RNA sequence: GGGAACGACUCGAGUAGAGUCGAAAAAACAGCUGGUUCCAACCGAAACAUGUCGAAGCAUGACCUCUGCCGAGGUAGUUCGUGGGGUAGAGCGACCGAUUGGGGAGUUCAACUCCGAGAGGAGUUGAAUGCGAGGAGAUUUCGAUCUCCUCGCAUUAAAAGAAACAACAACAACAAC
Reactivity to DMS in 0.01 (KOAc 150mM, MgCl2 10mM, bicine 150mM(pH8.5), 24C), signal-to-noise 5, nucleotides 027 to 126: a050a040c100a080g010c050u020g000g020u020u000c030c030a110a100c110c060g010a090a070a130c100a040u000g010u000c070g020a110a090g020c050a050u010g010a150c070c010u000c020u000g020c120c080g010a060g000g010u000a080g010u010u000c020g010u000g010g000g020g020u010a050g000a070g010c040g010a120c060c040g020a120u010u020g000g000g000g000a120g010u000u000c000a010a000c010u000c000c000g000a130g000a180g000g000a020g010u000u000g000
Reactivity to 2A3 in 0.01 (KOAc 150mM, MgCl2 10mM, bicine 150mM(pH8.5), 24C), signal-to-noise 3, nucleotides 027 to 126: a000a010c070a020g010c050u070g050g020u090u000c000c020a030a050c040c020g070a090a080a000c040a070u060g040u110c070g050a070a000g050c020a040u110g040a040c000c000u040c030u080g060c040c060g030a030g020g050u050a040g030u050u060c080g030u070g000g020g010g000u050a030g020a020g070c030g040a060c000c020g040a030u070u150g050g010g000g010a020g000u010u060c000a000a000c000u010c000c000g040a030g010a030g010g010a000g010u010u000g010